[RMDB]
RNA sequence: GGGAACGACUCGAGUAGAGUCGAAAAGAUAUGGAUCCAGUGGGACAUGCUUUAGGGUCGGAAACGACCCGAAGAGCAACAGCCCACAGGAUCCUAAGUCAAAACACUCUUUCUUCGGAAAGAGUGAGACAUUUAAUACGUUCGCGUAUUAAAUGUCAAAAGAAACAACAACAACAAC
Reactivity to DMS in 0.01 (KOAc 150mM, MgCl2 10mM, bicine 150mM(pH8.5), 24C), signal-to-noise 6, nucleotides 027 to 126: g000a040u000a080u010g000g000a000u000c000c000a080g050u010g000g000g010a040c060a300u010g030c000u000u000u000a300g000g000g000u000c000g010g000a010a010a070c010g010a010c010c010c000g000a070a100g000a010g010c020a100a030c260a100g000c010c000c000a010c000a040g000g000a010u000c000c000u000a000a070g000u000c010a130a130a170a300c020a000c000u000c000u000u000u000c000u000u020c210g010g000a010a000a000g000a020g010u000g000a040
Reactivity to 2A3 in 0.01 (KOAc 150mM, MgCl2 10mM, bicine 150mM(pH8.5), 24C), signal-to-noise 5, nucleotides 027 to 126: g020a000u020a010u060g000g010a010u000c010c020a030g010u020g000g020g000a060c180a300u300g030c010u230u280u050a060g000g000g010u010c020g000g000a020a030a000c000g000a000c030c000c000g010a000a000g000a000g010c000a020a060c090a050g020c010c000c000a000c000a000g000g000a010u000c000c000u010a020a000g010u000c020a000a020a130a200c000a010c000u000c000u030u000u010c020u050u080c300g120g000a010a000a000g000a000g000u000g000a020
An RNA of 177 nucleotides, treated with DMS and 2A3 and read out base by base. The DMS profile rests on 7,861 reads. Conditions: 150 mM KOAc, 10 mM MgCl2 and 150 mM bicine (pH 8.5), 24 C. DMS adducts were read by reverse transcription with MarathonRT.